[RMDB]
RNA sequence: GGGAACGACUCGAGUAGAGUCGAAAAUUAUUAUAGUAGGUCAGUGCCGCCUUGAGAAAGGCGACCGCGCUGUCCUUCUUUUCGUCUGGCCAUAUCUGCGAGAAGGCAAUGCGCGAGGCGUCAUCAAUGGCCACGUGAACGUACUCCCAGCCGGCGCGCAGCGGUAUAAAUUCGUUUAUACCGCUGCAAAAGAAACAACAACAACAAC
Reactivity to DMS in 0.01 (KOAc 150mM, MgCl2 10mM, bicine 150mM(pH8.5), 24C), signal-to-noise 1, nucleotides 027 to 156: u000u010a070u000u000a080u000a150g030u000a060g070g000u000c030a110g030u000g000c020c040g010c010c000u000u000g020a300g000a210a050a040g000g040c000g010a020c040c180g000c040g080c000u000g010u000c000c020u000u000c000u000u010u000u000c050g010u000c040u030g040g000c030c060a070u000a150u000c040u000g010c090g000a110g010a090a050g010g000c060a060a070u000g000c000g040c030g000a120g020g050c040g000u000c030a150u010c080a060a040u010g010g020c020c000a050c030g000u000g000a070a100c040g050u000a100c040u000c030c010c010a150g010c020c000g010g000c040g040c130
Reactivity to 2A3 in 0.01 (KOAc 150mM, MgCl2 10mM, bicine 150mM(pH8.5), 24C), signal-to-noise 3, nucleotides 027 to 156: u100u090a030u120u060a110u120a170g020u000a000g000g000u000c020a010g010u030g010c020c000g000c020c000u040u010g060a100g040a080a090a010g040g010c010g000a110c060c050g000c020g000c040u040g010u070c030c010u030u040c020u020u060u020u070c030g040u010c070u080g050g000c030c020a040u020a070u140c080u130g030c040g020a070g050a170a040g060g000c050a060a070u140g000c030g000c010g070a070g020g020c020g030u060c030a070u050c030a040a090u080g000g000c010c010a010c020g070u080g070a100a030c030g020u040a080c030u030c020c010c000a010g020c000c010g110g030c040g000c070
Chemical mapping of a 207-nucleotide RNA with DMS and 2A3. For 2A3 the reverse transcriptase was SuperScript II with manganese. The DMS profile rests on 2,750 reads. Source: RMDB library OK3TST, as collected in RNAgym. In probing experiments dimethyl sulfate is read out at A N1 and C N3, which are open when not base-paired. Values cover nucleotides 27 to 156.